[RMDB]
RNA sequence: GGGAACGACUCGAGUAGAGUCGAAAAACCUUAUUUUGAGAAGCUGAGGGAUUUGGCCCAUAGAAGCUUCAGCAACCGACUUUAAAUAGCACGGUGCUAAUACCAACGAGCAACUCGAAUGAUCAGUAAAACGUUGACAAGUUCGCUUGUCAACGAAGAAACAAUCAGAGUUCGCUCUGAUUGUUUCAAAAGAAACAACAACAACAAC
Reactivity to 2A3 in 0.01 (KOAc 150mM, MgCl2 10mM, bicine 150mM(pH8.5), 24C), signal-to-noise 4, nucleotides 027 to 156: a020c090c000u190u070a300u080u140u110u110g110a060g000a020a010g020c010u040g000a020g010g010g030a090u010u050u070g040g000c030c000c000a050u130a120g040a030a000g000c000u000u010c000a000g020c000a010a040c000c000g030a020c020u080u070u170a120a220a300u090a130g000c020a010c040g000g000u010g000c000u010a050a020u060a070c000c000a050a060c060g040a020g070c070a090a080c060u040c090g080a100a100u110g040a110u150c060a010g050u110a020a120a030a050c020g000u000u000g000a000c010a000a000g000u040u060c170g050c170u000u000g000u000c000a000a000c000g000a020a010
Reactivity to DMS in 0.01 (KOAc 150mM, MgCl2 10mM, bicine 150mM(pH8.5), 24C), signal-to-noise 2, nucleotides 027 to 156: a100c000c010u010u010a100u010u010u000u010g010a140g000a050a240g020c080u000g010a120g000g020g010a150u000u000u000g030g000c000c000c010a160u000a200g020a130a050g010c020u010u000c010a060g010c010a040a030c010c010g030a130c010u000u010u000a100a120a070u000a030g010c000a040c010g020g030u000g020c070u020a080a070u000a060c030c070a090a060c130g000a130g020c060a060a220c050u000c010g020a100a070u000g010a090u000c010a100g030u010a040a080a110a090c070g040u000u000g020a020c000a020a010g030u000u010c300g030c000u000u000g010u010c000a000a000c010g020a020a060

Description: Structure probing data (2A3 and DMS) for a 207-nucleotide construct. The DMS profile rests on 2,738 reads. The data come from the RNA Mapping Database (RMDB), library M2RFPK. Values cover nucleotides 27 to 156. DMS adducts were read by reverse transcription with MarathonRT.